[RMDB]
Conditions: 150 mM KOAc, 10 mM MgCl2 and 150 mM bicine (pH 8.5), 24 C. The record gives the reactivity of an RNA of 177 nucleotides to 2A3 and DMS. The 2A3 profile rests on 12,441 reads. The data come from the RNA Mapping Database (RMDB), library OK2TRN.
RNA sequence: GGGAACGACUCGAGUAGAGUCGAAAAGCCGCGCGUAUAGCGCAUCGCGGCUACGGCCGAUAUAUGCCGCGUACGAUCGCGAUGCGCUAAUUACGCGGCCGUACGAUGCCGCGGCAUUAUACGUAGCACGUCUCUACAUUUUCGAAUGUAGAGACGUAAAAGAAACAACAACAACAAC
Reactivity to 2A3 in 0.01 (KOAc 150mM, MgCl2 10mM, bicine 150mM(pH8.5), 24C), signal-to-noise 5, nucleotides 027 to 126: g030c000c000g000c000g000c010g000u030a020u010a120g000c010g000c010a000u020c000g010c000g000g000c000u000a010c010g110g020c050c050g060a030u060a020u020a030u300g080c050c020g060c050g050u040a020c070g180a300u040c000g000c000g010a000u000g000c000g000c010u000a010a000u010u010a000c010g000c000g010g000c000c000g010u010a010c030g030a030u030g000c010c010g080c160g090g000c010a010u000u060a030u030a050c040g030u050a030g030c080
Reactivity to DMS in 0.01 (KOAc 150mM, MgCl2 10mM, bicine 150mM(pH8.5), 24C), signal-to-noise 6, nucleotides 027 to 126: g030c000c000g010c000g010c010g000u000a010u000a020g000c010g010c000a000u000c010g010c000g020g010c010u000a030c010g000g010c040c170g000a180u010a090u010a140u010g010c020c020g000c060g010u000a030c200g000a100u010c010g020c000g000a010u000g000c010g010c000u000a000a010u000u000a020c000g010c000g010g010c010c000g010u000a010c050g010a020u000g010c020c030g040c300g030g010c010a010u000u000a090u000a010c020g000u000a110g010c160